Overview: Structure probing data (2A3 and DMS) for a 177-nucleotide construct. 2A3 adducts were read by reverse transcription with SuperScript II with manganese. Reactivities are given for positions 27 through 126. For DMS the reverse transcriptase was MarathonRT.
RNA sequence: GGGAACGACUCGAGUAGAGUCGAAAAGAUAUGGACUAAUCGACAGGUCGAAGAACUCGGAAACGAGGGAGACCAUGUCGAGUUAGUCCUAAGUCAAAAGGUACCUAACCUUCGGGUUAGGUACCAACCAGUGAUAAUGCUUCGGCAUUAUCACUGGAAAAGAAACAACAACAACAAC
Reactivity to 2A3 in 0.01 (KOAc 150mM, MgCl2 10mM, bicine 150mM(pH8.5), 24C), signal-to-noise 2, nucleotides 027 to 126: g020a020u070a080u120g010g000a010c000u000a020a030u000c010g000a000c010a010g010g000u030c030g120a260a050g010a070a030c010u010c010g000g040a070a050a040c020g010a010g000g000g000a070g010a000c000c100a230u040g000u000c000g020a010g000u000u000a000g000u000c000c000u000a050a020g010u000c030a030a010a000a190g010g000u000a000c000c010u020a000a000c000c020u070u140c300g070g000g000u000u010a000g000g000u000a000c020c000a010a000
Reactivity to DMS in 0.01 (KOAc 150mM, MgCl2 10mM, bicine 150mM(pH8.5), 24C), signal-to-noise 3, nucleotides 027 to 126: g000a040u010a300u010g000g010a010c010u000a020a030u000c010g000a000c020a030g000g020u000c000g010a100a160g020a120a160c000u010c000g010g000a130a120a210c010g000a000g010g000g000a060g010a030c000c010a040u010g010u000c000g020a010g030u000u000a010g000u010c000c000u000a000a070g000u000c050a050a050a130a120g000g010u000a010c000c000u000a010a000c000c010u000u000c220g030g000g000u000u000a000g010g000u000a000c000c000a000a030